[RMDB]
RNA sequence: GGGAACGACUCGAGUAGAGUCGAAAAGCUACAUUAGCCAAGAUAUGAGAGAUUCAUGGGAUACGUUUACCGAACAUCAGAAGAGAAUCCUGUUUGAGAAUGCUCAAAUCAUUGCAGACGGAGAGGAAUGGGAAUGACCGCAGGCGACAAGAUCAAGAAUGAAAGAUUCCUUCGGGAAUCUUUCAUUAAAAGAAACAACAACAACAAC
Reactivity to DMS in 0.01 (KOAc 150mM, MgCl2 10mM, bicine 150mM(pH8.5), 24C), signal-to-noise 1, nucleotides 027 to 156: g000c010u010a080c020a100u000u010a170g000c030c040a040a070g000a150u010a090u010g000a090g000a090g000a110u000u000c080a110u000g020g030g020a110u000a050c040g010u020u010u020a150c020c000g010a070a090c040a050u000c090a130g020a110a110g000a140g000a080a030u000c010c000u010g000u020u000u020g030a040g000a070a020u000g010c030u030c060a100a050a180u000c030a100u000u000g020c060a040g000a040c050g000g010a090g000a040g040g010a000a060u020g000g000g000a040a110u010g030a140c050c030g030c090a080g010g000c070g020a020c040a040a070g000a200u020c040a060a160g000
Reactivity to 2A3 in 0.01 (KOAc 150mM, MgCl2 10mM, bicine 150mM(pH8.5), 24C), signal-to-noise 1, nucleotides 027 to 156: g020c060u060a000c020a190u130u190a070g020c050c000a050a000g030a090u100a070u160g070a010g000a000g010a050u130u070c020a030u200g010g000g000a020u020a120c040g030u010u050u120a040c040c010g020a040a010c010a090u150c090a070g060a140a020g040a020g040a080a000u060c030c000u050g040u060u080u080g030a060g040a110a080u080g010c020u030c020a070a130a100u160c050a060u050u240g030c020a000g030a030c010g100g000a000g000a010g020g010a030a000u110g000g010g000a000a020u080g010a020c020c060g000c050a010g000g000c000g010a020c030a040a040g020a020u050c000a000a130g110
This 207-nucleotide RNA was probed chemically with DMS and 2A3.
DMS adducts were read by reverse transcription with MarathonRT.
The RNA was probed in 150 mM KOAc, 10 mM MgCl2 and 150 mM bicine (pH 8.5) at 24 C.
The 2A3 profile rests on 507 reads.